Source: RMDB library TTRINS, as collected in RNAgym. Structure probing data (DMS) for a 177-nucleotide construct.
[RMDB]
RNA sequence: GGGAACGACUCGAGUAGAGUCGAAAAGAUAUGGAACGGUCUGCUCUGUCUUAGUGACGAUAAGAUUAAGGUUCGGAAACGAACCAAUCUUUUGACGUCAGAGACAGAGCAGACCGUUCCUAAGUCACAAUAGACUUUUGUUCGCAAAAGUCUAUUGAAAAGAAACAACAACAACAAC
Reactivity to DMS in 0.01 (KOAc 150mM, MgCl2 10mM, bicine 150mM(pH8.5), 24C), signal-to-noise 2, nucleotides 027 to 126: g010a050u000a300u000g000g010a010a020c000g020g010u000c000u010g000c000u000c000u010g020u000c000u000u000a160g050u000g000a010c000g010a220u000a020a010g010a010u000u000a120a100g010g000u000u000c000g000g000a130a120a260c010g030a010a010c000c000a030a000u010c000u000u000u000u000g010a150c080g010u000c000a060g000a020g000a010c000a010g000a010g010c000a000g000a000c010c000g010u000u000c000c000u000a000a070g000u010c030a290
Values cover nucleotides 27 to 126.